[RMDB]
The record gives the reactivity of an RNA of 177 nucleotides to 2A3 and DMS. The RNA was probed in 150 mM KOAc, 10 mM MgCl2 and 150 mM bicine (pH 8.5) at 24 C. Reactivities are given for positions 27 through 126. For 2A3, 2,073 sequencing reads were counted. For DMS the reverse transcriptase was MarathonRT.
RNA sequence: GGGAACGACUCGAGUAGAGUCGAAAAGGGAAUAUUGUGCGCUAUUCCCACGGCCCGGUGACGCCAUCAUUCUUCAAAUGGCCGGGAGUUCGUCAAGGAACAAUAGUGAGUUUAACUGCUCAGCGCCCAAUGUCACUACCUUCGGGUAGUGACAUUGAAAAGAAACAACAACAACAAC
Reactivity to 2A3 in 0.01 (KOAc 150mM, MgCl2 10mM, bicine 150mM(pH8.5), 24C), signal-to-noise 2, nucleotides 027 to 126: g000g000g010a040a000u050a020u080u170g050u070g030c030g000c040u010a020u000u010c000c000c000a000c040g070g010c000c000c000g020g040u080g040a040c130g020c060c010a030u110c010a050u090u110c040u150u050c050a090a030a150u040g020g000c020c000g000g080g000a050g010u060u040c040g060u060c080a080a060g120g000a070a010c010a060a030u100a080g110u090g090a010g010u000u070u100a120a070c060u000g000c000u010c030a030g010c010g000c000c000
Reactivity to DMS in 0.01 (KOAc 150mM, MgCl2 10mM, bicine 150mM(pH8.5), 24C), signal-to-noise 3, nucleotides 027 to 126: g010g000g010a050a020u000a030u000u000g000u010g020c030g000c160u000a090u000u000c020c000c000a110c180g010g010c010c010c000g020g010u000g000a120c170g000c070c040a060u000c080a080u000u010c070u000u000c160a070a080a080u000g000g020c010c050g010g000g010a160g020u000u000c020g010u010c230a060a130g010g010a030a020c050a090a100u000a090g020u000g000a050g020u010u010u000a100a110c170u000g000c010u000c020a080g010c050g010c020c040